[RMDB]
An RNA of 177 nucleotides, treated with 2A3 and read out base by base.
The 2A3 profile rests on 398 reads.
RNA sequence: GGGAACGACUCGAGUAGAGUCGAAAAAUGGUUGAACAUUAUCCUUUUAAAAUACAUUCUGAUUUUGAGCCUCAAGGUGACCAACCGCAAGCAAUUAAGGAAAUCGUGGAUGGUAUUAAAGCGGGGAGUCCUCCAUCACGUUCGCGUGAUGGAGGACAAAAGAAACAACAACAACAAC
Reactivity to 2A3 in 0.01 (KOAc 150mM, MgCl2 10mM, bicine 150mM(pH8.5), 24C), signal-to-noise 1, nucleotides 027 to 126: a000u150g090g010u150u240g110a110a070c140a140u190u180a060u150c010c000u010u120u000u210a140a300a000a000u130a050c000a000u000u010c000u050g110a010u040u030u250u040g040a010g000c000c040u140c250a080a000g010g010u060g000a110c120c000a080a050c090c000g010c060a030a030g000c000a000a030u280u040a120a000g050g000a040a150a040u000c000g120u100g050g050a000u060g010g010u030a040u030u000a080a110a000g100c240g000g000g000g180a000